[RMDB]
RNA sequence: GGGAACGACUCGAGUAGAGUCGAAAAGGUCAUGCGUGGAACUGAUCUGCCCGUUCGUGUUCGUGACCGUGCCGCUCGUCGUCACGUCCACAUCGCCACUCGAAUGCGCGACGUUGCCGAUCUGCCAUCACCGUGGCGUAUUCGUACGCCACGGUGAAAAAGAAACAACAACAACAAC
Reactivity to DMS in 0.01 (KOAc 150mM, MgCl2 10mM, bicine 150mM(pH8.5), 24C), signal-to-noise 2, nucleotides 027 to 126: g000g000u000c000a040u000g030c090g000u000g020g000a060a100c070u000g000a030u000c000u000g000c010c100c020g020u000u000c070g060u000g010u000u000c060g000u000g010a040c120c060g030u000g000c030c050g020c030u000c110g000u000c050g030u000c010a040c020g000u000c000c040a060c060a040u000c090g010c080c090a110c120u020c050g000a070a060u010g030c020g040c030g000a050c030g030u000u000g010c020c040g020a060u000c030u000g010c090c060a170
Reactivity to 2A3 in 0.01 (KOAc 150mM, MgCl2 10mM, bicine 150mM(pH8.5), 24C), signal-to-noise 1, nucleotides 027 to 126: g090g000u120c050a070u140g070c100g090u100g060g010a160a180c040u020g020a020u000c010u020g040c000c000c000g000u040u050c030g000u010g000u010u000c020g000u010g040a060c060c000g010u030g090c060c030g080c020u150c080g140u030c020g000u000c000a020c010g000u000c060c020a010c010a050u080c070g000c040c000a030c010u030c070g040a100a040u050g020c020g010c030g000a020c030g050u060u150g000c000c030g010a050u000c080u030g030c010c010a050